An RNA of 177 nucleotides, treated with 2A3 and DMS and read out base by base. The 2A3 profile rests on 99,128 reads. The DMS profile rests on 52,381 reads. Values cover nucleotides 27 to 126. DMS adducts were read by reverse transcription with MarathonRT.

[RMDB]
RNA sequence: GGGAACGACUCGAGUAGAGUCGAAAAUCGGGCGUAGGGUCUAUACUAUGGUCGUAUUCUACUAGGAGUAUGAAGAAGGGCGUAUAGAUGUUACGCAGCAGAGAGUUAACGCCCUUCUCUCUCUGCAGAUAGUUAGGGCAUUCGUGUCUUAACUAUCAAAAGAAACAACAACAACAAC
Reactivity to 2A3 in 0.01 (KOAc 150mM, MgCl2 10mM, bicine 150mM(pH8.5), 24C), signal-to-noise 9, nucleotides 027 to 126: u130c030g050g060g000c010g000u010a010g030g040g030u010c020u020a030u000a030c020u040a090u280g210g040u040c010g030u030a040u010u010c010u030a220c030u080a090g070g130a040g050u050a040u200g040a030a030g080a040a070g080g080g020c040g000u010a020u020a040g020a010u070g300u290u020a020c030g000c010a000g000c000a000g010a000g000a000g010u050u100a070a050c070g080c000c000c000u050u020c010u000c000u000c000u000c000u000g000c000a010
Reactivity to DMS in 0.01 (KOAc 150mM, MgCl2 10mM, bicine 150mM(pH8.5), 24C), signal-to-noise 9, nucleotides 027 to 126: u030c100g000g010g000c010g020u000a010g000g000g010u000c040u020a030u030a020c020u010a120u030g000g010u000c010g010u000a040u010u000c010u000a090c180u040a110g000g000a070g010u000a020u020g010a060a050g010a120a090g000g000g020c110g000u000a080u010a030g010a060u010g000u010u010a020c040g010c060a080g010c000a000g000a020g010a040g000u010u020a070a080c120g000c010c010c020u000u010c040u010c020u000c000u000c000u000g000c020a170
Conditions: 150 mM KOAc, 10 mM MgCl2 and 150 mM bicine (pH 8.5), 24 C.